An RNA of 177 nucleotides, treated with DMS and 2A3 and read out base by base. The data come from the RNA Mapping Database (RMDB), libraries RFM100 and RFMREP. 2A3 adducts were read by reverse transcription with SuperScript II with manganese. High DMS reactivity at an A or C suggests that its Watson-Crick edge is free.

[RMDB]
RNA sequence: GGGAACGACUCGAGUAGAGUCGAAAAUCUUCCAGGGCUCUCCCCUUGCCCUAGGCUCUGGCCGUUGCGCCCGGCGGGGUCAACUCCAUGAUUAGCAUGGAGCUGUAGGAGUCUAAAUUGGGGACGCAACAAAUCAAGAGUUCGCUCUUGAUUUGUUAAAAGAAACAACAACAACAAC
Reactivity to DMS in 0.01 (KOAc 150mM, MgCl2 10mM, bicine 150mM(pH8.5), 24C), signal-to-noise 4, nucleotides 027 to 126: u020c160u000u020c020c010a050g000g000g000c000u010c060u000c010c000c000c000u000u000g010c000c010c020u010a020g030g000c010u010c010u010g000g050c020c000g000u020u010g010c100g010c080c030c030g000g020c040g020g000g000g010u010c030a120a140c000u000c000c000a000u000g000a300u020u050a170g010c010a010u000g010g000a000g020c040u000g000u050a130g000g010a030g010u010c010u000a020a030a040u010u000g000g010g010g020a040c300g000c160
Reactivity to 2A3 in 0.01 (KOAc 150mM, MgCl2 10mM, bicine 150mM(pH8.5), 24C), signal-to-noise 9, nucleotides 027 to 126: u040c040u100u030c020c010a010g000g010g010c000u020c020u030c060c000c000c000u010u050g000c010c000c000u010a020g000g010c000u000c010u030g300g070c010c000g070u060u070g050c050g110c060c030c020g040g000c010g000g030g010g000u040c010a000a010c010u000c000c000a000u000g020a300u130u300a060g090c000a000u000g010g000a000g010c000u020g010u050a040g030g010a010g000u000c010u020a010a030a020u100u040g000g000g000g000a000c010g010c020